[RMDB]
This 207-nucleotide RNA was probed chemically with DMS and 2A3. For DMS the reverse transcriptase was MarathonRT. Reactivities are rounded to 0.1 and cut off at 0 and 3.
RNA sequence: GGGAACGACUCGAGUAGAGUCGAAAAGGGGUCACUUAAUAGUGUCACUAGCUUCAACAGCCUGGCUGAAGCCUCCACGGCCAGGACAUGAAGCAUGACACGAAUUAAGUGACGGAGGCACCCAAAAUCUCACGAUUGCUUCGGCAAUCGUGAGAAACAUCAUUGUUUAGUUCGCUAAACAAUGAUGAAAAGAAACAACAACAACAAC
Reactivity to DMS in 0.01 (KOAc 150mM, MgCl2 10mM, bicine 150mM(pH8.5), 24C), signal-to-noise 2, nucleotides 027 to 156: g000g000g020g000u000c000a000c010u010u010a000a030u020a140g000u000g000u000c000a000c150u010a160g020c000u000u000c000a080a150c120a150g010c000c020u000g000g000c010u000g000a030a110g020c010c000u010c000c040a300c030g020g030c020c000a030g020g000a040c070a120u000g000a020a030g070c030a130u000g020a010c010a010c020g000a080a120u010u000a000a000g000u000g010a030c030g020g000a010g110g040c030a170c030c050c030a060a100a100a130u010c010u010c010a030c020g000a030u000u000g030c000u000u000c300g080g020c020a000a010u000c000g000u000g000a000g000a010a060a150
Reactivity to 2A3 in 0.01 (KOAc 150mM, MgCl2 10mM, bicine 150mM(pH8.5), 24C), signal-to-noise 4, nucleotides 027 to 156: g090g010g050g000u010c000a000c010u010u010a010a010u050a090g000u000g000u000c010a030c170u160a070g010c000u020u000c030a160a140c050a170g050c000c000u010g000g000c000u020g030a140a020g030c000c020u020c030c020a040c020g010g000c000c000a010g000g030a000c000a140u140g000a000a000g000c010a020u010g000a000c000a000c000g000a040a040u000u000a000a000g000u000g010a000c000g000g020a000g000g000c020a040c010c000c020a070a100a030a080u010c000u010c000a010c000g000a000u000u010g010c010u080u130c290g080g000c000a000a000u000c000g000u000g000a010g000a000a000a010